RNA sequence: GGGAACGACUCGAGUAGAGUCGAAAAAUUAAAAAAUUAAGCAAAAGACAACCACCUUUCCCGCUGACAAUAGCGUUAUCCCUCUGCACUGCGGUAAUAUGAGGGCACAGUAAAUCCCGCAAGGAUGAUGAUCAACAGGGGUUCGCCCCUGUUGAAACAAUCUCUAUGGUUUCGACCAUAGAGAUUGAAAAGAAACAACAACAACAAC
Reactivity to 2A3 in 0.01 (KOAc 150mM, MgCl2 10mM, bicine 150mM(pH8.5), 24C), signal-to-noise 1, nucleotides 027 to 156: a000u110u090a080a010a050a000a000a080u100u130a130a000g040c040a090a080a030a130g050a050c020a000a030c070c040a050c040c020u010u020u010c000c010c000g000c020u060g040a050c090a110a220u050a100g000c010g000u010u060a070u070c000c000c010u030c020u040g000c000a020c090u040g020c060g020g060u040a040a040u030a060u230g000a010g000g000g000c070a020c010a040g050u030a000a000a080u010c010c020c020g000c110a030a020g030g000a000u070g000a060u050g010a050u030c000a000a000c000a000g000g010g030g040u020u020c140g130c000c020c000c000u000g000u000u000g000a010a010a000
Reactivity to DMS in 0.01 (KOAc 150mM, MgCl2 10mM, bicine 150mM(pH8.5), 24C), signal-to-noise 1, nucleotides 027 to 156: a120u010u000a010a040a040a220a110a060u000u020a050a150g040c020a040a030a070a120g030a170c040a070a070c040c030a100c090c000u020u000u000c030c020c080g020c010u000g010a080c060a090a120u010a110g000c040g010u000u010a080u000c000c000c020u010c020u000g020c060a100c080u000g000c010g010g040u000a110a110u010a100u000g010a090g030g040g060c050a030c060a110g010u010a090a060a090u000c040c010c010g020c140a040a100g040g020a040u000g040a080u000g000a170u000c010a000a000c020a040g020g000g010g040u000u010c230g000c040c000c000c020u010g000u010u010g000a040a090a110
This 207-nucleotide RNA was probed chemically with 2A3 and DMS.
The RNA was probed in 150 mM KOAc, 10 mM MgCl2 and 150 mM bicine (pH 8.5) at 24 C.
The 2A3 profile rests on 914 reads.